Chemical mapping of a 177-nucleotide RNA with 2A3 and DMS. For 2A3, 1,307 sequencing reads were counted. For DMS, 1,847 sequencing reads were counted. Conditions: 150 mM KOAc, 10 mM MgCl2 and 150 mM bicine (pH 8.5), 24 C.
RNA sequence: GGGAACGACUCGAGUAGAGUCGAAAAGUCAGUGCUCGGGGUACUGGACUCAGACCUGAUUAUGGAGGAGUUCAUCGAAGCCGCCAACAUCUGCGACGAGAACAUCACAGGGGGCAUCUACAAUGAGCCUAUGAGCUUCAUUCGUGAAGCUCAUAGGAAAAGAAACAACAACAACAAC
Reactivity to 2A3 in 0.01 (KOAc 150mM, MgCl2 10mM, bicine 150mM(pH8.5), 24C), signal-to-noise 2, nucleotides 027 to 126: g050u030c020a000g000u000g040c040u050c070g030g060g030g070u020a070c010u070g060g020a040c010u000c000a050g060a170c000c020u100g110a300u110u290a080u130g050g010a030g000g030a050g000u050u030c020a060u080c170g040a040a000g040c010c030g050c080c020a050a030c010a120u050c030u060g060c040g000a030c020g030a060g000a090a020c020a040u050c040a000c030a100g050g000g010g010g000c010a010u020c010u060a030c020a060a140u130g020a040g010
Reactivity to DMS in 0.01 (KOAc 150mM, MgCl2 10mM, bicine 150mM(pH8.5), 24C), signal-to-noise 3, nucleotides 027 to 126: g020u000c020a040g020u010g010c050u000c080g010g010g020g030u000a050c110u010g000g000a060c000u000c020a150g000a140c070c000u000g000a140u010u000a060u000g000g000a200g000g000a080g010u000u000c020a060u010c110g000a080a160g020c010c040g000c050c030a060a110c160a030u000c040u010g010c070g010a080c060g010a110g000a050a050c060a070u000c030a030c100a100g000g010g010g020g020c100a090u000c060u000a060c130a070a060u010g030a170g000
2A3 adducts were read by reverse transcription with SuperScript II with manganese. It was measured as part of the RMDB library OK2TST.